Chemical mapping of a 177-nucleotide RNA with 2A3 and DMS. The 2A3 profile rests on 2,107 reads. DMS (dimethyl sulfate) methylates the pairing face of unpaired adenines and cytosines. It was measured as part of the RMDB library TTRINS. DMS adducts were read by reverse transcription with MarathonRT. Values cover nucleotides 27 to 126.
RNA sequence: GGGAACGACUCGAGUAGAGUCGAAAAGAUAUGGAAGUUGAGGACACGUGCUCCGACGAUCUGUAUAUGCUCUCGGAAACGAGAGCAUAUACAGGGAGGAGUUGUCUACCCACCAACUUCCUAAGUCCCUGUCUUACAUGUUCGCAUGUAAGACAGGAAAAGAAACAACAACAACAAC
Reactivity to 2A3 in 0.01 (KOAc 150mM, MgCl2 10mM, bicine 150mM(pH8.5), 24C), signal-to-noise 1, nucleotides 027 to 126: g070a100u300a120u300g000g000a000a010g000u000u010g000a050g040g000a030c080a010c270g300u300g000c000u010c030c030g300a300c020g010a010u010c000u000g000u040a000u000a000u000g000c000u050c010u020c000g010g130a110a100a030c030g020a000g010a000g000c010a020u000a000u000a000c010a020g000g030g000a000g000g000a020g000u020u070g000u000c030u080a200c000c080c000a100c080c000a000a020c020u000u000c000c020u030a180a020g110u090c040
Reactivity to DMS in 0.01 (KOAc 150mM, MgCl2 10mM, bicine 150mM(pH8.5), 24C), signal-to-noise 2, nucleotides 027 to 126: g010a160u010a150u000g020g030a040a010g000u000u000g010a190g010g000a030c080a160c300g040u010g000c000u010c010c010g000a060c300g020a030u040c000u000g000u000a010u010a030u000g010c000u000c000u000c000g000g000a120a110a260c010g010a000g000a000g020c000a000u000a000u000a010c000a010g000g000g000a020g010g000a050g000u000u000g020u000c030u000a110c070c020c090a300c230c040a000a010c000u000u000c010c020u000a060a080g010u000c050